[RMDB]
RNA sequence: GGGAACGACUCGAGUAGAGUCGAAAAGCAUUGGGAAAGUUAAUCAAAAGUGCAUCAAAACUUUCCCUAAACGAAAUCAAAAUCGUUAUGAUGCACUUUUGACAUCGAUUAACAUGAAUAGACACAACUUGCAUUACAACUUCGGUUGUAAUGCAAGAAAAGAAACAACAACAACAAC
Reactivity to DMS in 0.01 (KOAc 150mM, MgCl2 10mM, bicine 150mM(pH8.5), 24C), signal-to-noise 1, nucleotides 027 to 126: g000c090a030u000u020g000g000g000a110a110a140g000u000u000a090a080u000c000a010a020a010a010g010u000g030c000a000u000c010a090a110a090a090c100u000u000u010c000c040c010u000a000a020a010c010g020a040a060a090u020c300a050a100a160a090u000c010g030u000u000a160u010g010a020u000g000c000a020c000u000u000u030u000g000a110c140a040u010c140g000a060u000u000a000a020c010a030u000g000a060a080u010a070g010a060c160a050c180a060a100
Reactivity to 2A3 in 0.01 (KOAc 150mM, MgCl2 10mM, bicine 150mM(pH8.5), 24C), signal-to-noise 1, nucleotides 027 to 126: g010c050a070u140u290g050g000g070a110a200a020g050u030u040a050a010u020c020a010a000a000a010g000u000g030c000a010u010c030a010a020a010a230c020u010u010u000c000c030c000u000a010a000a000c000g010a040a020a010u200c080a080a040a000a100u020c000g000u010u010a070u100g000a010u000g010c000a000c000u000u010u000u040g090a080c080a080u080c040g070a020u000u060a030a030c020a040u090g100a090a070u160a120g140a010c050a000c000a100a110